[RMDB]
RNA sequence: GGGAACGACUCGAGUAGAGUCGAAAAAGUAAGUUAAUUGCUCUUUCAGUAUGCAGUCAAUUCUUACCAUAUUUUAUUUUAUGACGUAUCAAAUAAAUGCUUCGAUAAAAUGCGCUAUUAGAUGCACCGAUGUAUUUACCUUCGGGUAAAUACAUCGAAAAGAAACAACAACAACAAC
Reactivity to 2A3 in 0.01 (KOAc 150mM, MgCl2 10mM, bicine 150mM(pH8.5), 24C), signal-to-noise 3, nucleotides 027 to 126: a000g000u000a010a000g000u020u210a030a020u000u020g010c010u000c000u020u130u020c090a150g180u170a160u120g010c040a030g020u100c020a020a030u010u040c010u010u020a000c000c010a060u070a090u170u170u030u060a120u030u070u010u020a080u080g030a000c000g010u040a030u060c050a050a070a150u110a030a130a020u040g030c010u080u060c070g080a060u090a090a090a060a050u070g010c040g000c020u030a040u160u090a150g040a080u060g020c000a000c020
Reactivity to DMS in 0.01 (KOAc 150mM, MgCl2 10mM, bicine 150mM(pH8.5), 24C), signal-to-noise 2, nucleotides 027 to 126: a080g000u010a020a010g000u010u020a040a030u010u010g010c010u000c020u020u000u010c200a120g020u000a040u000g020c160a020g000u010c020a030a030u000u010c000u000u010a040c010c040a120u000a060u020u000u010u010a040u020u020u000u010a060u010g000a060c070g000u000a040u010c030a080a060a080u010a050a080a050u010g000c020u010u000c050g020a040u000a050a040a050a030u000g000c080g030c060u000a160u000u010a110g020a100u000g000c050a060c160
Record summary:
Structure probing data (2A3 and DMS) for a 177-nucleotide construct. It was measured as part of the RMDB library OK2TST. For 2A3 the reverse transcriptase was SuperScript II with manganese. Reactivities are given for positions 27 through 126. The reactions ran in a buffer of 150 mM KOAc, 10 mM MgCl2 and 150 mM bicine (pH 8.5), at 24 C.